[RMDB]
RNA sequence: GGGAACGACUCGAGUAGAGUCGAAAAUAUGGGGAUUUAUUAUCCCAUUUGGGAGGCUGAUUUAGUUACUCCCGCGCGUAUUAGUUAGAUUAUGCAUACGUUGUACUGAUUACGCGCGAAGUAACAAGGGAUAAUUAUUCUUCGGAAUAAUUAUCCCAAAAGAAACAACAACAACAAC
Reactivity to 2A3 in 0.01 (KOAc 150mM, MgCl2 10mM, bicine 150mM(pH8.5), 24C), signal-to-noise 8, nucleotides 027 to 126: u280a060u050g020g010g020g040a020u080u120u080a190u150u160a070u130c000c010c010a010u080u060u010g020g010g000a030g020g000c080u050g070a170u120u100u300a030g020u000u010a010c000u030c000c100c000g000c000g000c000g000u010a020u020u010a010g030u020u060a040g020a210u090u130a060u300g120c090a070u070a190c120g080u090u060g020u060a010c010u010g020a020u090u130a020c000g000c000g000c000g000a000a000g000u010a020a020c040a060a090
Reactivity to DMS in 0.01 (KOAc 150mM, MgCl2 10mM, bicine 150mM(pH8.5), 24C), signal-to-noise 4, nucleotides 027 to 126: u040a040u010g010g020g000g000a070u010u030u060a060u040u000a100u000c000c010c010a060u010u040u010g000g000g010a060g010g010c060u010g000a080u010u020u020a060g000u000u000a000c010u020c070c060c030g020c000g010c000g010u000a010u000u000a020g010u010u010a190g010a030u020u010a060u030g010c240a080u020a100c180g010u000u010g000u000a020c020u000g000a010u010u030a000c000g000c000g020c010g010a050a010g000u000a000a020c030a100a110